[RMDB]
RNA sequence: GGGAACGACUCGAGUAGAGUCGAAAAGAUAUGGACUCCUGGGAGGAGGACACUAUGUCGGAAACGACAUAGAAAUCUACCCACCCUCCUGGGAGUCCUAAGUCAAACAACCACUUCGGUGGUUGAAGUCCUUAAGUUACUUCGGUAACUUAAGGACAAAAGAAACAACAACAACAAC
Reactivity to 2A3 in 0.01 (KOAc 150mM, MgCl2 10mM, bicine 150mM(pH8.5), 24C), signal-to-noise 1, nucleotides 027 to 126: g000a030u050a000u110g000g000a010c010u000c020c000u020g040g020g010a000g040g040a070g140g040a000c020a000c010u000a000u000g020u010c000g010g020a010a050a050c000g020a000c020a000u010a000g010a010a050a000u070c030u090a160c020c000c040a070c040c030c000u010c000c000u000g000g030g000a000g000u000c000c010u000a000a000g010u000c010a040a030a000c000a000a000c000c020a010c060u050u040c300g150g000u000g000g040u020u000g010a090a010
Reactivity to DMS in 0.01 (KOAc 150mM, MgCl2 10mM, bicine 150mM(pH8.5), 24C), signal-to-noise 2, nucleotides 027 to 126: g010a030u000a180u010g000g010a030c010u000c010c010u000g000g000g000a010g000g000a150g000g000a080c300a170c000u010a010u010g010u000c000g000g000a120a050a060c010g010a010c000a000u010a010g020a010a110a130u000c080u000a100c050c090c230a260c240c010c000u000c000c000u000g000g010g000a000g000u000c000c000u010a000a040g010u000c030a100a110a180c010a010a000c000c000a000c000u000u010c180g050g020u000g000g000u000u010g000a060a140